[RMDB]
RNA sequence: GGGAACGACUCGAGUAGAGUCGAAAACAAAGACCAUUGCUCACUUAUACCCUGCUGUUGCCUCGUUUUAUGGCUUGUUUUGUUAUAUUGCCAGUGUUAAGUAAACAGCUCCUCGGUGGAGUAUUGCUGAGGUAGUUGAAUUCGUUCAACUACCUCAAAAAGAAACAACAACAACAAC
Reactivity to DMS in 0.01 (KOAc 150mM, MgCl2 10mM, bicine 150mM(pH8.5), 24C), signal-to-noise 4, nucleotides 027 to 126: c100a090a070a100g010a160c080c020a050u010u010g010c050u000c080a080c080u010u000a110u010a140c040c020c030u000g020c030u000g010u000u000g000c030c030u000c110g000u010u000u000u000a100u010g010g010c020u010u000g010u010u000u000u010g010u000u000a080u000a070u000u000g010c020c020a080g020u000g010u000u000a070a140g010u010a040a050a090c050a100g010c010u000c040c020u000c250g040g030u000g000g010a070g000u000a040u000u000g010c190
Reactivity to 2A3 in 0.01 (KOAc 150mM, MgCl2 10mM, bicine 150mM(pH8.5), 24C), signal-to-noise 1, nucleotides 027 to 126: c000a010a070a000g040a020c010c010a040u000u120g020c000u020c000a110c020u100u080a040u070a170c030c000c010u000g000c000u000g040u100u060g030c000c010u060c030g060u010u000u080u190a150u050g030g000c000u030u040g100u070u120u060u000g070u040u060a150u030a020u160u130g000c050c000a020g000u020g060u210u050a090a000g020u030a040a080a000c000a010g000c000u040c010c020u060c140g140g000u110g000g050a000g010u050a080u080u140g050c040